RNA sequence: GGGAACGACUCGAGUAGAGUCGAAAAGAUAUGGAGACUGAAUACUACGUUCGCAUAGGAGGAACGUCGGAAACGACGUUCUCCCCACCCUAUGAACUACGAAAGUAGUAUUCAGUCUCCUAAGUCAUCAUAGAUAGAAGUUCGCUUCUAUCUAUGAAAAAGAAACAACAACAACAAC
Reactivity to 2A3 in 0.01 (KOAc 150mM, MgCl2 10mM, bicine 150mM(pH8.5), 24C), signal-to-noise 1, nucleotides 027 to 126: g030a050u110a060u180g010g030a000g000a000c000u060g020a050a000u010a060c030u010a010c020g090u030u020c030g060c050a000u010a000g010g000a020g000g020a000a000c000g020u010c000g040g030a040a140a010c000g000a000c000g010u010u010c000u020c000c000c000c020a040c000c000c000u060a010u040g050a090a140c200u260a070c290g060a080a060a000g050u040a000g000u000a000u000u010c000a000g050u000c000u000c010c000u020a010a000g000u000c000a010
Reactivity to DMS in 0.01 (KOAc 150mM, MgCl2 10mM, bicine 150mM(pH8.5), 24C), signal-to-noise 6, nucleotides 027 to 126: g010a060u000a300u000g000g000a020g010a040c000u000g010a020a020u000a000c010u000a010c000g000u000u000c000g010c020a020u000a030g000g010a210g020g000a000a010c010g020u000c020g000g000a100a070a260c010g010a010c000g010u000u000c010u000c060c010c020c040a300c090c000c010u000a030u000g000a090a070c160u010a300c030g010a010a040a030g010u000a000g000u000a000u000u000c000a000g000u000c000u000c000c000u000a010a050g000u000c030a110